An RNA of 177 nucleotides, treated with DMS and 2A3 and read out base by base. Values cover nucleotides 27 to 126. For 2A3, 972 sequencing reads were counted.

[RMDB]
RNA sequence: GGGAACGACUCGAGUAGAGUCGAAAAAAGCUUGAGACUCUGGAGAGCGUGCUGAGACGCUUGGGCGAGAAGCUGGUAGUCGUCACGGGCGAUAGGGAUGCGGAGUCCGAGCCACGUAGCCGCAGACGCUCACCACUAUGUUCGCAUAGUGGUGAGCAAAAGAAACAACAACAACAAC
Reactivity to DMS in 0.01 (KOAc 150mM, MgCl2 10mM, bicine 150mM(pH8.5), 24C), signal-to-noise 1, nucleotides 027 to 126: a120a050g020c040u000u000g000a260g010a050c010u020c010u010g050g000a120g050a200g010c050g050u000g020c000u000g000a120g000a110c020g000c020u000u020g010g000g010c020g000a050g020a080a100g000c010u000g030g000u000a060g000u000c020g030u000c020a170c060g030g000g050c000g010a070u010a110g000g000g000a090u000g000c000g000g000a080g000u010c020c000g000a040g030c010c090a020c130g020u000a150g020c010c000g010c100a100g020a050c110
Reactivity to 2A3 in 0.01 (KOAc 150mM, MgCl2 10mM, bicine 150mM(pH8.5), 24C), signal-to-noise 1, nucleotides 027 to 126: a010a020g020c040u100u130g010a080g010a240c010u010c010u030g030g100a160g030a030g080c030g010u000g130c020u060g020a050g030a020c020g010c000u030u050g030g010g020c040g010a070g000a150a000g030c070u040g000g100u120a090g120u040c000g000u010c020a070c140g010g010g000c030g050a040u080a130g110g010g010a030u090g040c000g000g000a010g020u000c010c010g010a000g010c030c000a040c070g090u090a040g080c030c010g030c050a010g000a080c020